Chemical mapping of a 177-nucleotide RNA with 2A3 and DMS. The reactions ran in a buffer of 150 mM KOAc, 10 mM MgCl2 and 150 mM bicine (pH 8.5), at 24 C. 2A3 adducts were read by reverse transcription with SuperScript II with manganese.
[RMDB]
RNA sequence: GGGAACGACUCGAGUAGAGUCGAAAAAUGAAGUUGGUUUUAAAACAGCAAUGACACGUGUAUUUAAUGAUUAUGCACGUCGUAUUAAUGAACUUAAAACAAAAGAUAAAAACUUAGAUGGUAAUGAAAUAGGACAUGUAUUCGUACAUGUCCUAUUAAAAGAAACAACAACAACAAC
Reactivity to 2A3 in 0.01 (KOAc 150mM, MgCl2 10mM, bicine 150mM(pH8.5), 24C), signal-to-noise 2, nucleotides 027 to 126: a020u040g040a060a020g060u030u140g060g010u030u090u030u050a110a080a050a070c060a000g000c060a070a050u130g070a040c000a000c020g000u030g000u010a040u020u100u050a110a150u080g210a090u140u150a010u040g000c000a000c000g010u010c070g000u040a010u050u050a050a060u040g010a020a010c050u000u020a010a000a000a000c020a010a140a020a040g010a020u180a020a160a060a030a020c010u030u050a030g060a120u140g070g090u100a110a080u160g070a010
Reactivity to DMS in 0.01 (KOAc 150mM, MgCl2 10mM, bicine 150mM(pH8.5), 24C), signal-to-noise 5, nucleotides 027 to 126: a100u010g000a050a070g010u000u000g010g010u000u000u000u010a010a020a110a300c060a050g010c270a030a030u000g010a050c090a040c000g020u010g010u000a010u010u010u000a110a110u010g010a150u010u000a020u010g000c000a010c000g020u000c140g030u000a030u020u000a060a170u000g010a050a120c200u000u000a020a020a020a020c010a040a060a120a080g000a120u010a060a070a060a040a060c040u000u010a070g000a090u010g010g010u000a050a070u000g000a060